[RMDB]
RNA sequence: GGGAACGACUCGAGUAGAGUCGAAAACCACCGAAGUUCGCUUCGGUGGAAAAGAUACCGGUCUCGGUAUCAAAGUGAGACCCACAGACCUCAGGAAACUGAAAACCGAUCCGUUCGCGGAUCGGAACAUUUCAGACUGGUUCGCCAGUCUGAAAUGAAAAGAAACAACAACAACAAC
Reactivity to DMS in 0.01 (KOAc 150mM, MgCl2 10mM, bicine 150mM(pH8.5), 24C), signal-to-noise 2, nucleotides 027 to 126: c000c000a000c000c010g000a010a000g000u000u010c290g010c020u000u000c010g000g020u000g000g000a010a010a100a180g010a010u000a010c010c000g010g010u020c220u000c030g010g010u000a000u010c010a030a110a090g000u010g000a190g000a190c020c010c040a140c150a100g010a090c150c100u000c000a040g000g010a090a130a140c020u000g000a020a010a100a160c000c000g010a000u000c000c000g000u000u010c100g020c010g020g030a010u000c000g000g000a070a060
Reactivity to 2A3 in 0.01 (KOAc 150mM, MgCl2 10mM, bicine 150mM(pH8.5), 24C), signal-to-noise 1, nucleotides 027 to 126: c000c000a010c010c010g000a000a020g000u040u120c170g100c140u000u000c010g000g000u020g010g000a010a020a010a050g000a000u030a020c020c020g150g160u210c300u200c230g010g000u020a010u010c020a040a000a000g100u090g070a130g080a050c000c040c010a000c020a020g160a100c020c050u020c000a000g000g090a040a110a080c020u040g010a040a020a060a050c000c000g000a000u000c000c010g000u030u110c230g000c000g060g000a000u000c000g020g000a020a000